Chemical mapping of a 177-nucleotide RNA with 2A3 and DMS. For 2A3 the reverse transcriptase was SuperScript II with manganese. The reactions ran in a buffer of 150 mM KOAc, 10 mM MgCl2 and 150 mM bicine (pH 8.5), at 24 C. DMS adducts were read by reverse transcription with MarathonRT.

RNA sequence: GGGAACGACUCGAGUAGAGUCGAAAAGAUAUGGAACGCUGAUGGACAUGCGAAUACGUCGGAAACGACGUAGUCGCAACAGCCAUAGCGUUCCUAAGUCAAAAGGCCUAUACUUCGGUAUAGGCCAGAAGUCUUAUCACUUCGGUGAUAAGACUUCAAAAGAAACAACAACAACAAC
Reactivity to 2A3 in 0.01 (KOAc 150mM, MgCl2 10mM, bicine 150mM(pH8.5), 24C), signal-to-noise 2, nucleotides 027 to 126: g010a000u020a000u040g000g000a000a020c000g020c040u180g140a140u020g030g000a050c100a300u300g000c010g000a000a010u010a000c000g000u000c010g000g020a030a000a000c000g000a000c000g000u000a000g010u010c010g050c020a080a070c060a070g000c000c000a000u010a010g000c000g010u000u000c010c000u000a000a000g010u000c010a000a000a080a260g000g000c000c000u010a010u000a010c010u030u120c300g050g000u020a000u020a020g000g020c000c000a000
Reactivity to DMS in 0.01 (KOAc 150mM, MgCl2 10mM, bicine 150mM(pH8.5), 24C), signal-to-noise 2, nucleotides 027 to 126: g000a010u000a060u020g000g000a010a020c010g000c000u000g020a040u000g000g010a030c130a150u010g020c000g000a010a020u010a010c000g010u010c000g020g010a010a030a040c000g010a020c000g010u000a000g000u000c010g000c010a050a040c130a190g000c000c000a010u000a010g010c000g020u000u000c000c000u000a000a040g000u000c000a100a090a160a120g000g000c000c000u000a000u000a000c000u000u030c220g030g000u000a000u010a000g000g030c010c000a000